[RMDB]
The record gives the reactivity of an RNA of 207 nucleotides to 2A3 and DMS. It was measured as part of the RMDB library OK3TST. For DMS the reverse transcriptase was MarathonRT. The RNA was probed in 150 mM KOAc, 10 mM MgCl2 and 150 mM bicine (pH 8.5) at 24 C.
RNA sequence: GGGAACGACUCGAGUAGAGUCGAAAACAAUGUACUUGGCACAGGGACUGGCAUGGGGCACUCAGAAAAUAUUUGUCAAAUGGAUGGUGGAAUUCACCAGCACCCAGAAAGCAGUGUGAUUUGGGGAGUUUUAUCAGCGAGUGGCCAUGUGACUCCAAAAUAGCUACUAUUUCGAUAGUAGCUAUUUAAAAGAAACAACAACAACAAC
Reactivity to 2A3 in 0.01 (KOAc 150mM, MgCl2 10mM, bicine 150mM(pH8.5), 24C), signal-to-noise 6, nucleotides 027 to 156: c040a010a080u160g030u140a070c030u050u080g040g000c050a040c060a130g070g000g050a060c060u060g060g030c010a030u050g010g000g000g140c010a010c020u050c030a030g160a040a090a020a030u160a120u070u170u120g090u070c040a070a090a090u090g050g020a020u010g010g030u030g020g060a090a110u120u060c020a010c020c010a010g010c010a030c000c040c010a040g120a050a120a010g060c080a040g030u030g010u020g110a100u120u100u080g020g000g020g000a060g010u040u050u040u030a060u050c010a010g060c010g050a020g020u030g010g030c000c000a010u030g010u010g030a040c030u000c030c020a010
Reactivity to DMS in 0.01 (KOAc 150mM, MgCl2 10mM, bicine 150mM(pH8.5), 24C), signal-to-noise 4, nucleotides 027 to 156: c050a100a130u020g020u000a080c060u000u010g020g010c020a100c040a130g000g010g020a090c040u000g000g000c030a130u000g010g020g010g040c030a050c040u000c050a120g010a080a080a090a140u010a080u010u000u010g020u000c040a060a090a150u010g010g040a070u010g010g030u000g030g010a070a110u000u010c100a060c010c010a050g030c020a030c000c000c010a130g000a110a130a130g010c050a040g010u000g020u000g000a190u000u010u000g000g010g020g020a090g010u010u000u000u010a050u000c040a060g020c070g020a130g020u000g030g020c000c030a100u000g010u000g010a110c030u000c010c020a110